[RMDB]
RNA sequence: GGGAACGACUCGAGUAGAGUCGAAAAGGGACCGUCCCUCGGUAAUGGCGAAUGGGACCCAGAACUCUCUUUAGCUUCCGAAAGAGAAGCAAGAGAAAACUGGCUCUCCCUUAGCCAUCCGAGUGGAAAAGGAUUCGCUUCGGCGAAUCCAAAAGAAACAACAACAACAAC
Reactivity to 2A3 in 0.01 (KOAc 150mM, MgCl2 10mM, bicine 150mM(pH8.5), 24C), signal-to-noise 3, nucleotides 027 to 129: g000g020g060a030c000c000g030u030c000c000c000u000c000g000g020u100a080a030u000g000g010c010g030a030a040u070g000g000g000a070c100c000c000a000g020a020a010c000u000c010u000c000u040u090u110a030g010c010u000u000c010c000g170a220a160a050g120a010g000a010a010g030c000a010a000g000a000g000a000a020a010a000c000u000g000g020c000u010c040u000c000c000c000u020u010a000g010c000c000a010u000c000c030g000a000g010u190g010g020a000a050a000a000
Reactivity to DMS in 0.01 (KOAc 150mM, MgCl2 10mM, bicine 150mM(pH8.5), 24C), signal-to-noise 4, nucleotides 027 to 129: g010g020g050a000c010c050g040u030c000c010c020u000c000g020g000u030a140a050u020g010g000c000g000a020a030u030g070g000g000a030c160c060c000a010g000a150a300c160u000c000u010c040u060u020u030a120g050c010u020u000c010c020g070a140a190a160g020a180g040a040a050g000c000a030a050g020a090g080a000a000a110a290c000u040g000g020c010u020c120u000c000c030c010u000u040a260g040c010c000a010u010c010c040g020a020g000u070g190g020a000a020a050a000